This 177-nucleotide RNA was probed chemically with DMS and 2A3. DMS adducts were read by reverse transcription with MarathonRT. For 2A3, 17,870 sequencing reads were counted. Conditions: 150 mM KOAc, 10 mM MgCl2 and 150 mM bicine (pH 8.5), 24 C. Values cover nucleotides 27 to 126. 2A3 adducts were read by reverse transcription with SuperScript II with manganese.
RNA sequence: GGGAACGACUCGAGUAGAGUCGAAAAGAUAUGGAAUGCGUGGCAAGAAGACAGUCGGAAACGACUGUUCUUUGAUGACCCACCAUUCCUAAGUCAAAGUUUUUUACGUGUUCGCACGUAAAAAACAUCCAUAGAUGUACUUCGGUACAUCUAUGGAAAAAGAAACAACAACAACAAC
Reactivity to DMS in 0.01 (KOAc 150mM, MgCl2 10mM, bicine 150mM(pH8.5), 24C), signal-to-noise 6, nucleotides 027 to 126: g010a010u010a020u010g000g000a010a000u000g000c300g000u000g000g010c000a080a010g010a000a010g000a030c000a010g000u000c000g020g000a000a010a010c000g000a010c000u000g000u010u010c000u000u000u000g010a070u020g000a030c300c000c000a000c000c000a020u000u000c000c000u000a000a060g000u000c000a150a100a180g010u000u000u000u000u000u000a010c000g020u000g010u000u010c300g020c010a010c000g000u000a000a000a000a000a000a000c020a140
Reactivity to 2A3 in 0.01 (KOAc 150mM, MgCl2 10mM, bicine 150mM(pH8.5), 24C), signal-to-noise 3, nucleotides 027 to 126: g000a000u010a000u040g010g000a010a010u010g020c120g130u000g000g010c050a090a090g010a010a000g000a010c000a010g010u000c000g000g000a000a000a000c010g010a000c000u010g040u130u040c010u010u000u010g180a230u030g010a010c000c000c000a000c000c000a000u010u000c000c000u000a000a000g000u010c020a130a050a210g000u010u000u000u000u010u000a000c010g010u010g080u080u110c300g040c100a000c010g000u010a000a010a000a000a000a010c010a030